[RMDB]
Chemical mapping of a 177-nucleotide RNA with 2A3 and DMS. For DMS, 853 sequencing reads were counted. 2A3 adducts were read by reverse transcription with SuperScript II with manganese. It was measured as part of the RMDB library VIROID. The RNA was probed in 150 mM KOAc, 10 mM MgCl2 and 150 mM bicine (pH 8.5) at 24 C. Reactivities are given for positions 27 through 126.
RNA sequence: GGGAACGACUCGAGUAGAGUCGAAAAGUCGUCGGUAGAGAGUACUCACCUGUCUUCGGUAGAGAGUACUCACCUGUCGUCGGUAGACAGUACUCACCUGCUGUCGACCGUCGAUGCUGACGCCUGUAUCUGCAGUGUAGUUCGCUACACUGCAGAUAAAAGAAACAACAACAACAAC
Reactivity to 2A3 in 0.01 (KOAc 150mM, MgCl2 10mM, bicine 150mM(pH8.5), 24C), signal-to-noise 1, nucleotides 027 to 126: g000u020c000g000u000c000g020g000u100a100g110a000g000a000g220u010a000c000u030c000a040c000c050u080g110u160c120u220u170c110g000g040u110a080g020a010g000a000g140u010a020c000u010c010a020c000c020u070g010u040c000g020u000c000g010g000u010a010g040a010c010a000g020u050a000c040u050c040a060c010c020u000g000c000u000g010u010c010g010a010c000c000g010u000c010g010a010u030g000c020u020g020a010c000g000c010c000u070g030u000
Reactivity to DMS in 0.01 (KOAc 150mM, MgCl2 10mM, bicine 150mM(pH8.5), 24C), signal-to-noise 1, nucleotides 027 to 126: g010u000c020g010u000c000g010g010u000a020g020a170g000a000g020u000a010c010u010c010a040c100c010u040g000u020c070u040u020c230g040g020u000a090g010a280g010a010g050u000a000c020u010c010a060c110c120u010g010u000c000g000u000c000g000g000u020a070g040a010c020a000g030u000a010c050u000c170a130c180c260u000g000c020u010g000u000c010g000a020c000c000g020u000c010g020a020u000g000c000u010g010a040c000g040c050c030u000g000u000